Source information
This 207-nucleotide RNA was probed chemically with DMS and 2A3.
[RMDB]
RNA sequence: GGGAACGACUCGAGUAGAGUCGAAAAGCAGUAGAGGAGCCACCAGAGUUCUUACCUGAGCAUAUCAAUAGUGCAUAUGAGGAAGGGGCGAAAUGUUUGGCUAUAGGUUGUUAUAAUGCAGCAGCAACCAUGUUUAGGCUUUGCCUUGAUUAUGCCAGAUGAAGUGAAAUUUCGAUUUCACUUCAUCAAAAGAAACAACAACAACAAC
Reactivity to DMS in 0.01 (KOAc 150mM, MgCl2 10mM, bicine 150mM(pH8.5), 24C), signal-to-noise 3, nucleotides 027 to 156: g040c050a060g020u010a100g030a080g010g010a080g020c040c040a120c070c060a120g010a100g010u010u000c040u000u010a140c050c010u000g010a120g010c040a100u000a270u010c090a110a120u010a160g020u010g040c050a040u000a110u000g020a090g010g010a110a080g020g010g030g000c020g020a040a060a090u010g010u000u010u000g020g000c030u010a140u000a070g010g010u010u000g030u010u000a090u000a060a100u000g020c010a050g000c040a080g010c040a020a030c030c000a080u010g030u000u000u000a070g020g030c020u000u000u010g000c010c030u000u000g010a100u000u000a050u010g020c000c050a140
Reactivity to 2A3 in 0.01 (KOAc 150mM, MgCl2 10mM, bicine 150mM(pH8.5), 24C), signal-to-noise 5, nucleotides 027 to 156: g030c010a010g010u130a010g000a050g060g030a020g000c030c020a070c010c040a030g020a030g080u080u020c020u080u080a070c010c030u060g020a030g060c010a020u070a030u180c060a110a170u090a220g080u100g050c030a020u030a080u220g050a050g050g030a040a070g020g000g010g010c020g000a050a060a050u190g030u060u080u040g030g010c030u070a040u100a220g020g010u020u000g010u020u050a090u070a230a130u170g040c040a050g000c020a000g020c000a040a010c000c000a010u060g060u030u060u070a040g000g000c020u070u080u200g010c010c000u020u020g030a060u060u140a020u140g040c020c020a010

The DMS profile rests on 5,292 reads.